[RMDB]
RNA sequence: GGGAACGACUCGAGUAGAGUCGAAAACGGUGUCUCUGUGUGCUAUGGGAGAUUCAUGGUCCUGGAGUAAAGGUUGAGCGUGUUGAUCGUAAGUGGAUCUCGAGGCAAUUUCUUUCACAGUCAAUAAUCAACUGGACGUGUUCGCACGUUCAGUUGAAAAAGAAACAACAACAACAAC
Reactivity to DMS in 0.01 (KOAc 150mM, MgCl2 10mM, bicine 150mM(pH8.5), 24C), signal-to-noise 5, nucleotides 027 to 126: c050g000g000u010g010u010c030u020c020u000g000u000g010u020g010c040u010a080u020g000g000g000a030g000a030u010u010c060a040u000g000g000u020c020c010u000g000g030a170g010u020a060a120a100g010g010u000u020g030a100g000c040g010u030g000u000u010g000a070u030c030g010u020a110a130g020u010g010g000a020u000c010u000c040g010a110g010g010c030a060a050u020u010u000c010u000u000u010c050a030c060a060g000u030c120a070a090u020a070a110
Reactivity to 2A3 in 0.01 (KOAc 150mM, MgCl2 10mM, bicine 150mM(pH8.5), 24C), signal-to-noise 6, nucleotides 027 to 126: c020g050g020u030g070u030c010u000c000u030g060u000g000u020g090c040u060a100u190g040g070g000a080g030a060u040u080c030a040u060g060g010u070c000c020u040g030g050a090g040u190a070a110a020g060g020u040u060g040a030g020c050g000u050g020u040u120g010a060u050c020g040u080a090a040g040u040g030g020a030u000c010u010c020g030a040g010g000c020a020a040u020u070u000c010u000u080u050c070a050c010a110g030u060c030a040a060u080a150a070

An RNA of 177 nucleotides, treated with DMS and 2A3 and read out base by base. As a SHAPE reagent, 2A3 marks flexible, mostly unpaired nucleotides at the ribose 2'-OH. Values cover nucleotides 27 to 126. The reactions ran in a buffer of 150 mM KOAc, 10 mM MgCl2 and 150 mM bicine (pH 8.5), at 24 C.